[RMDB]
RNA sequence: GGGAACGACUCGAGUAGAGUCGAAAAAGGAGUCCUUUCGAGGACUCCUACUAGUGGCGCCGACCACUUAAAAACAAGGGCCAAACAAAAAUGUCAGCAAAAAACGCCUAGCUUUCGAGCUAGGCAAGUUAUACAUCCGUUUCGACGGAUGUAUAACAAAAGAAACAACAACAACAAC
Reactivity to DMS in 0.01 (KOAc 150mM, MgCl2 10mM, bicine 150mM(pH8.5), 24C), signal-to-noise 2, nucleotides 027 to 126: a180g000g010a010g020u000c000c000u000u000u010c140g030a010g010g000a000c000u000c000c010u010a000c010u000a000g040u000g010g000c040g000c050c020g000a170c000c000a000c010u000u000a020a020a020a040a020c170a030a060g010g000g020c010c300a070a050a080c090a050a050a120a100a050u010g010u010c080a050g000c080a000a050a100a070a070a050c150g020c000c000u000a010g000c000u000u000u010c150g000a030g000c000u000a010g010g000c000a000a010
Reactivity to 2A3 in 0.01 (KOAc 150mM, MgCl2 10mM, bicine 150mM(pH8.5), 24C), signal-to-noise 1, nucleotides 027 to 126: a020g000g000a010g010u000c010c000u000u040u050c110g080a000g000g010a010c000u000c000c000u000a010c000u000a010g010u000g000g040c020g030c060c000g280a300c040c050a010c040u130u210a060a040a000a030a000c060a080a000g040g010g000c000c000a020a100a120c050a060a110a070a060a040u170g060u170c080a040g000c050a300a150a030a000a000a000c060g000c010c000u010a020g010c000u040u100u130c190g060a000g020c000u030a020g000g000c000a010a010
The record gives the reactivity of an RNA of 177 nucleotides to DMS and 2A3. It was measured as part of the RMDB library M2PK50. The RNA was probed in 150 mM KOAc, 10 mM MgCl2 and 150 mM bicine (pH 8.5) at 24 C. The 2A3 profile rests on 758 reads.